Chemical mapping of a 177-nucleotide RNA with 2A3 and DMS. The RNA was probed in 150 mM KOAc, 10 mM MgCl2 and 150 mM bicine (pH 8.5) at 24 C. 2A3 adducts were read by reverse transcription with SuperScript II with manganese.
[RMDB]
RNA sequence: GGGAACGACUCGAGUAGAGUCGAAAACGGGCCAUCGGGCUGGAGAUGAUCGAGUACGGCGACCCUGACGGUCAGGGCGAUCUCAAGCGCAACAACGAGGUCGCGUUCCGCGCCGAGGUCGUCUACGCCAUCUUAGGGCGUUCGCGCCCUAAGAUGGAAAAGAAACAACAACAACAAC
Reactivity to 2A3 in 0.01 (KOAc 150mM, MgCl2 10mM, bicine 150mM(pH8.5), 24C), signal-to-noise 2, nucleotides 027 to 126: c010g020g020g000c010c010a180u160c120g080g090g030c040u080g080g030a100g010a100u140g000a050u080c080g020a030g080u060a030c100g000g000c010g030a010c010c010c000u020g030a070c010g010g030u090c040a260g070g000g000c020g010a000u000c010u000c020a100a070g100c120g050c170a070a140c010a040a030c130g000a010g030g000u010c000g000c000g090u190u020c050c010g040c040g000c000c000g020a040g000g000u010c000g000u000c000u020a010c030g000
Reactivity to DMS in 0.01 (KOAc 150mM, MgCl2 10mM, bicine 150mM(pH8.5), 24C), signal-to-noise 2, nucleotides 027 to 126: c100g030g000g020c030c020a030u010c130g000g010g070c080u000g010g030a080g000a080u000g000a090u000c040g020a180g020u000a050c150g050g000c010g000a030c020c000c010u000g010a050c010g010g000u000c030a110g000g010g000c000g000a000u000c000u000c000a160a170g020c120g010c150a090a070c180a060a110c150g000a020g010g000u000c030g000c010g040u000u010c030c050g000c030g020c010c030g010a040g010g010u000c010g030u000c000u000a010c080g020
Reactivities are given for positions 27 through 126.